[RMDB]
Record summary
This 177-nucleotide RNA was probed chemically with DMS and 2A3. DMS adducts were read by reverse transcription with MarathonRT. For 2A3 the reverse transcriptase was SuperScript II with manganese. The reactions ran in a buffer of 150 mM KOAc, 10 mM MgCl2 and 150 mM bicine (pH 8.5), at 24 C.

RNA sequence: GGGAACGACUCGAGUAGAGUCGAAAACGACAACCGUGGCGGCCAGGUGAUCGGCCUGAACGAUCUGGAGGUCGGCGCGGCGACGCUCGACAACGGCCAGCAAGGCCUGCUCGGCAGCCAGCAGUCAAGUACGGACUCAUUUCGAUGAGUCCGUACUAAAAGAAACAACAACAACAAC
Reactivity to DMS in 0.01 (KOAc 150mM, MgCl2 10mM, bicine 150mM(pH8.5), 24C), signal-to-noise 1, nucleotides 027 to 126: c050g010a120c170a170a060c050c100g030u000g010g000c010g010g010c000c030a030g030g020u000g000a090u010c080g000g000c030c110u000g000a130a110c210g030a080u000c000u000g000g030a150g000g030u000c000g000g010c060g030c020g000g010c150g000a110c010g000c000u000c000g000a000c020a050a120c080g000g000c030c000a140g000c200a160a030g010g000c010c000u000g030c030u000c020g000g020c000a060g010c000c040a070g000c130a060g010u030c060a150
Reactivity to 2A3 in 0.01 (KOAc 150mM, MgCl2 10mM, bicine 150mM(pH8.5), 24C), signal-to-noise 1, nucleotides 027 to 126: c040g100a020c000a000a030c030c040g100u030g080g010c000g010g020c000c020a050g000g140u070g060a170u120c050g120g000c000c060u020g040a070a020c060g020a100u040c020u060g140g020a050g020g000u000c000g000g100c040g000c000g130g050c030g020a040c000g030c020u160c050g050a020c020a190a140c080g190g000c010c000a010g050c050a070a040g010g000c000c050u010g000c000u010c040g030g000c020a050g030c000c000a020g000c020a000g050u020c040a040